[RMDB]
Description: An RNA of 177 nucleotides, treated with DMS and 2A3 and read out base by base. It was measured as part of the RMDB library 15KREP.
RNA sequence: GGGAACGACUCGAGUAGAGUCGAAAAUGUUACAUUGUGCUAAUUUCAAUGUAUUGUUUGCUAUGACCAUGCCUAAGACUUGUUUCGGACCCAUAGUCCGAAAGAUCUUUGUUGAUGGCGUGCCAUUAAACAUAUGUUUGUUCGCAAACAUAUGUUUAAAAGAAACAACAACAACAAC
Reactivity to DMS in 0.01 (KOAc 150mM, MgCl2 10mM, bicine 150mM(pH8.5), 24C), signal-to-noise 9, nucleotides 027 to 126: u000g000u000u000a010c010a000u000u000g020u010g010c250u020a110a130u010u010u000c010a010a010u000g000u000a020u000u000g010u000u000u010g020c080u010a080u000g010a090c230c030a020u000g010c010c000u010a140a300g000a010c020u000u010g000u000u000u000c000g010g000a020c000c140c280a120u010a180g000u000c000c000g010a010a000a020g000a150u010c050u000u000u000g000u000u000g000a200u010g000g010c020g030u000g010c100c030a120u000u000
Reactivity to 2A3 in 0.01 (KOAc 150mM, MgCl2 10mM, bicine 150mM(pH8.5), 24C), signal-to-noise 7, nucleotides 027 to 126: u060g000u010u020a000c010a000u000u010g010u040g070c090u170a180a160u130u170u090c000a000a010u000g010u010a030u010u100g050u020u030u060g080c040u080a070u120g040a060c020c000a010u020g010c010c000u020a030a020g010a010c010u040u080g040u060u040u000c000g000g000a010c030c020c070a140u150a040g000u000c000c000g000a000a000a000g020a010u040c040u080u100u140g020u020u040g030a040u090g000g010c000g000u010g000c010c000a040u040u020